[RMDB]
RNA sequence: GGGAACGACUCGAGUAGAGUCGAAAAUGGGGCCCGGUGGAGAGACUGAUCGUAAUGCCCUUGGAGCAGGGAAGAAAAUAAUUUAGAAAGGAGAUUCCGCCCCAGCUUGCGGUGCGGCCGAAAGGCUGGUAAUAUCGGGUUUCGACCCGAUAUUACCAAAAGAAACAACAACAACAAC
Reactivity to DMS in 0.01 (KOAc 150mM, MgCl2 10mM, bicine 150mM(pH8.5), 24C), signal-to-noise 2, nucleotides 027 to 126: u000g000g000g000g070c030c110c060g000g010u000g000g000a090g000a100g000a100c030u000g000a100u020c050g000u060a110a100u000g000c010c030c020u010u030g000g010a070g000c040a040g000g030g010a170a060g030a060a060a040a040u020a070a060u030u040u040a060g000a060a100a100g000g000a090g030a160u020u000c010c050g010c080c010c000c040a040g040c030u000u010g000c160g010g020u010g000c130g010g000c010c010g000a050a110a090g000g020c020u000
Reactivity to 2A3 in 0.01 (KOAc 150mM, MgCl2 10mM, bicine 150mM(pH8.5), 24C), signal-to-noise 2, nucleotides 027 to 126: u060g000g000g050g000c000c040c030g020g050u090g000g050a080g000a010g010a040c030u080g020a070u070c040g020u090a110a070u130g000c000c000c000u020u050g010g030a030g000c010a010g020g020g050a010a060g090a050a110a000a010u200a030a070u100u150u110a110g060a060a090a010g020g020a110g010a080u110u000c030c000g000c000c020c000c000a020g050c040u010u060g010c030g030g020u030g020c050g010g000c010c010g040a070a040a000g000g000c030u010
An RNA of 177 nucleotides, treated with DMS and 2A3 and read out base by base. Reactivities are given for positions 27 through 126. It was measured as part of the RMDB library RFM100. DMS adducts were read by reverse transcription with MarathonRT. Conditions: 150 mM KOAc, 10 mM MgCl2 and 150 mM bicine (pH 8.5), 24 C. The 2A3 profile rests on 1,734 reads.